[RMDB]
RNA sequence: GGGAACGACUCGAGUAGAGUCGAAAAGCACGUUUUGCAUGCUAGGUAUGACCUGUGACCACCACGCGAAAGCGAGAAACAGGUCAUUUGCCGAGGUGGGAGGUGGGAAAGCAUGCUUUCGUGCGAAGGGAUAGGAAUGGUUCGCCAUUCCUAUCCCAAAAGAAACAACAACAACAAC
Reactivity to 2A3 in 0.01 (KOAc 150mM, MgCl2 10mM, bicine 150mM(pH8.5), 24C), signal-to-noise 5, nucleotides 027 to 126: g000c000a000c010g000u000u010u110u140g030c010a010u000g000c000u020a030g010g050u140a000u010g000a000c010c010u000g000u000g040a050c060c000a040c040c000a130c070g010c000g080a160a050a040g010c010g020a000g000a020a050a000c000a000g000g020u000c000a000u000u000u050g020c030c010g080a160g030g120u300g010g040g070a180g070g110u300g060g000g000a100a050a000g000c000a000u000g000c020u000u000u000c000g010u010g000c000g010a020a010
Reactivity to DMS in 0.01 (KOAc 150mM, MgCl2 10mM, bicine 150mM(pH8.5), 24C), signal-to-noise 1, nucleotides 027 to 126: g010c000a000c000g000u000u000u000u000g070c000a000u000g030c000u000a080g000g000u020a010u000g010a020c000c010u000g000u030g000a300c080c080a110c120c080a120c010g000c040g000a100a010a170g020c000g020a060g000a110a170a000c000a020g000g000u010c000a000u000u010u010g010c070c000g000a210g010g010u020g000g000g050a110g000g010u020g000g000g000a200a110a050g000c020a050u000g000c020u000u070u000c000g040u000g010c040g000a100a020